Chemical mapping of a 177-nucleotide RNA with 2A3. Reactivities are given for positions 27 through 126. The RNA was probed in 150 mM KOAc, 10 mM MgCl2 and 150 mM bicine (pH 8.5) at 24 C. 2A3 adducts were read by reverse transcription with SuperScript II with manganese.
RNA sequence: GGGAACGACUCGAGUAGAGUCGAAAAGGGAGCUUGUGGAAGGCGAAACAGGAGUAAUCCGCAAAGAAACAGGAUUUUCAUCCUUCCUUUCUUUCGCGUUUCCUUCCUUUGCGCGCCACUCGACCCCCCCUUGAAAGGGGUUCGCCCCUUUCAAGGGAAAAGAAACAACAACAACAAC
Reactivity to 2A3 in 0.01 (KOAc 150mM, MgCl2 10mM, bicine 150mM(pH8.5), 24C), signal-to-noise 1, nucleotides 027 to 126: g020g000g000a130g030c000u010u020g010u030g030g020a030a000g070g030c020g020a000a020a080c300a110g020g010a000g030u040a020a020u060c040c000g000c000a000a040a000g010a000a010a080c300a190g010g000a000u050u020u270u300c070a000u030c010c000u000u030c000c000u000u020u000c040u000u010u060c100g000c000g000u000u030u030c020c000u020u050c000c000u000u000u000g000c020g020c000g030c000c000a010c000u040c020g130a180c000c000c010c020